Source: RMDB library OK2TRN, as collected in RNAgym. Chemical mapping of a 177-nucleotide RNA with 2A3 and DMS. For 2A3, 5,455 sequencing reads were counted. The reactions ran in a buffer of 150 mM KOAc, 10 mM MgCl2 and 150 mM bicine (pH 8.5), at 24 C.

[RMDB]
RNA sequence: GGGAACGACUCGAGUAGAGUCGAAAAGAAAGCAUGCAUCGCUGGAGUCCCCACUGCGCGCUGGGCUGGCUGCAGGCUGAGCUAGAAGAGGCGGAGCAGGAGGCAGAGGAGCAGAUGGAGCAGCUGACGAUUUAAAAUACUUCGGUAUUUUAAAUCGAAAAGAAACAACAACAACAAC
Reactivity to 2A3 in 0.01 (KOAc 150mM, MgCl2 10mM, bicine 150mM(pH8.5), 24C), signal-to-noise 3, nucleotides 027 to 126: g050a010a080a000g030c020a050u110g020c000a050u080c050g010c030u020g020g040a040g080u070c000c000c000c000a040c020u060g000c040g000c000g000c040u060g010g070g000c030u040g030g010c030u100g040c030a060g110g000c040u090g050a000g010c030u050a020g020a180a020g040a150g060g010c020g030g000a060g020c010a020g010g040a050g020g010c040a000g010a050g100g020a020g010c020a010g010a060u120g010g040a040g020c010a010g010c030u030g030a020
Reactivity to DMS in 0.01 (KOAc 150mM, MgCl2 10mM, bicine 150mM(pH8.5), 24C), signal-to-noise 5, nucleotides 027 to 126: g000a150a140a070g010c030a060u000g010c080a060u000c080g010c020u010g010g010a220g010u010c010c020c000c050a120c050u000g000c050g000c080g010c050u010g000g010g010c040u000g000g010c020u010g020c080a080g020g030c060u000g010a100g010c030u000a070g000a100a100g020a180g000g010c050g000g000a150g020c030a050g010g010a070g010g010c080a070g010a120g010g000a100g020c050a040g010a060u000g000g010a100g000c030a050g010c040u010g010a210